[RMDB]
RNA sequence: GGGAACGACUCGAGUAGAGUCGAAAAUGAUCGAGAGAUCUAAGUAUGUACGCGAGUCAAGUGCACAGACUCGAGCGAAAGCUCGGUCGAAAGACCGCGUACAUGGGACGGCAAGUGUACAGUCGAAGCAUGACUGACCAUUCGUGGUCAGUCAUGCAAAAGAAACAACAACAACAAC
Reactivity to DMS in 0.01 (KOAc 150mM, MgCl2 10mM, bicine 150mM(pH8.5), 24C), signal-to-noise 2, nucleotides 027 to 126: u000g000a030u010c000g020a300g020a160g000a020u000c000u000a110a170g000u010a020u000g000u010a000c000g010c000g010a030g010u010c020a030a020g040u000g010c050a040c000a300g000a010c000u000c000g010a000g000c000g000a220a090a150g020c000u000c000g010g000u000c000g000a050a080a100g000a000c000c000g020c000g030u000a000c000a000u010g020g020g000a090c060g000g000c020a030a090g010u000g000u000a020c000a300g030u000c000g000a090a150
Reactivity to 2A3 in 0.01 (KOAc 150mM, MgCl2 10mM, bicine 150mM(pH8.5), 24C), signal-to-noise 1, nucleotides 027 to 126: u150g010a000u000c000g000a000g000a000g000a060u010c010u050a100a010g150u080a080u040g000u000a000c000g010c000g000a010g010u000c030a130a160g040u010g030c020a020c020a040g000a000c010u020c040g020a010g000c000g030a110a020a000g010c000u000c000g000g000u010c000g010a020a000a000g010a010c020c000g000c000g010u000a000c000a000u000g000g000g030a030c010g000g040c020a140a250g040u030g010u040a020c010a000g020u000c020g040a020a010
Background:
Source: RMDB library OK2TRN, as collected in RNAgym. This 177-nucleotide RNA was probed chemically with DMS and 2A3. For 2A3 the reverse transcriptase was SuperScript II with manganese. For DMS the reverse transcriptase was MarathonRT. Conditions: 150 mM KOAc, 10 mM MgCl2 and 150 mM bicine (pH 8.5), 24 C.